[RMDB]
RNA sequence: GGGAACGACUCGAGUAGAGUCGAAAAUCUGCGCUGCGUUCGGUAAUCGCGGAAGAUGGCAAAGUGCUGUAUCAGAGCUUCCCGCAGGCGGAACGCGCUGUUCCGGCGCAGGCGGCGUAUCUGACACGGUAUUUUUGCUGUUCGCAGCAAAAAUACCAAAAGAAACAACAACAACAAC
Reactivity to DMS in 0.01 (KOAc 150mM, MgCl2 10mM, bicine 150mM(pH8.5), 24C), signal-to-noise 2, nucleotides 027 to 126: u000c030u000g000c080g010c030u010g000c030g030u000u000c040g040g020u000a100a110u000c070g020c040g010g030a120a080g000a040u000g020g010c010a020a070a070g030u000g020c000u010g000u000a100u000c030a040g000a170g000c030u000u000c040c000c020g030c040a110g010g000c010g000g040a020a030c020g030c220g040c200u000g010u000u000c010c000g000g000c000g030c010a050g010g000c060g000g010c070g020u010a110u000c020u000g000a040c130a050c070
Reactivity to 2A3 in 0.01 (KOAc 150mM, MgCl2 10mM, bicine 150mM(pH8.5), 24C), signal-to-noise 2, nucleotides 027 to 126: u010c000u050g010c070g000c050u020g010c000g010u030u090c010g040g120u100a120a070u090c040g000c030g070g000a020a080g020a060u140g020g000c000a080a040a060g030u050g040c030u050g000u040a060u060c010a010g000a000g040c000u050u050c020c000c010g000c000a030g050g100c010g000g060a060a020c020g020c080g020c170u090g000u010u000c040c020g050g000c000g020c000a000g050g000c010g050g000c020g020u060a130u070c020u000g010a010c000a010c120